Chemical mapping of a 177-nucleotide RNA with DMS and 2A3. The 2A3 profile rests on 11,332 reads. The reactions ran in a buffer of 150 mM KOAc, 10 mM MgCl2 and 150 mM bicine (pH 8.5), at 24 C. Values cover nucleotides 27 to 126. It was measured as part of the RMDB library OK2TRN.
RNA sequence: GGGAACGACUCGAGUAGAGUCGAAAAGACUGUCUCUCUCUGAGACUGACAGUGUCACUGUGACUGUGUGAGAGUCUGACACUGAGAGACACACUGUCUCACUGACUGUCUCACAGUGACUCACACAACAUACCAGGCUAUUCGUAGCCUGGUAUGUAAAAGAAACAACAACAACAAC
Reactivity to DMS in 0.01 (KOAc 150mM, MgCl2 10mM, bicine 150mM(pH8.5), 24C), signal-to-noise 8, nucleotides 027 to 126: g010a070c020u000g000u000c000u000c010u000c040u010c220u000g010a080g020a030c160u010g000a040c020a010g010u010g010u010c060a140c160u010g000u010g010a100c130u010g010u000g000u000g000a020g000a140g010u010c110u020g020a190c060a050c060u000g010a070g010a020g000a020c010a100c230a140c220u000g010u000c030u000c140a220c120u010g010a070c080u010g000u000c010u000c010a130c010a010g010u000g000a140c020u000c030a030c050a020c080a090
Reactivity to 2A3 in 0.01 (KOAc 150mM, MgCl2 10mM, bicine 150mM(pH8.5), 24C), signal-to-noise 7, nucleotides 027 to 126: g060a010c010u010g020u010c000u010c000u000c010u000c200u300g010a010g020a070c100u090g010a010c010a030g060u080g050u200c080a040c170u090g050u080g150a050c030u030g000u000g000u010g050a010g000a020g100u040c100u140g070a060c020a030c100u050g030a030g010a010g000a110c010a000c000a020c120u110g010u060c010u020c070a090c090u100g040a030c030u030g040u050c010u000c020a030c000a000g000u000g030a020c010u010c010a010c000a000c010a010